RNA sequence: GGGAACGACUCGAGUAGAGUCGAAAAGAUAUGGAAAUUUCGCGAAACGAUCGUAUCGGAAACGAUACAAUCGGAGAAACUUCCUAAGUCAAAGCUAGCCAUUAUGCUUCGGCAUAAUGGCUAGCAAGUUGUGUUUAAGGUUCGCCUUAAACACAACAAAAGAAACAACAACAACAAC
Reactivity to 2A3 in 0.01 (KOAc 150mM, MgCl2 10mM, bicine 150mM(pH8.5), 24C), signal-to-noise 3, nucleotides 027 to 126: g020a000u060a020u100g020g000a010a030a010u030u020u000c030g010c070g110a120a110a070c010g000a020u000c040g000u000a000u000c000g000g020a090a040a030c000g000a000u000a010c010a010a000u010c020g000g010a180g010a050a010a000c030u000u020c010c000u040a220a030g050u070c090a190a050a020g000c000u000a000g000c010c000a010u000u000a010u020g020c010u050u090c300g140g000c000a000u000a010a000u010g050g030c000u000a000g000c000a000a000
Reactivity to DMS in 0.01 (KOAc 150mM, MgCl2 10mM, bicine 150mM(pH8.5), 24C), signal-to-noise 4, nucleotides 027 to 126: g010a030u010a300u000g000g000a000a000a040u000u000u000c000g000c110g010a060a080a150c010g010a010u000c030g010u000a000u000c000g000g010a100a080a170c000g000a010u000a000c000a020a000u000c010g000g000a160g000a010a010a020c040u000u000c000c000u000a050a180g010u000c030a060a100a130g000c000u000a000g010c000c000a020u010u010a010u000g000c000u000u010c230g020g000c010a010u000a000a000u000g000g000c000u000a000g010c000a000a020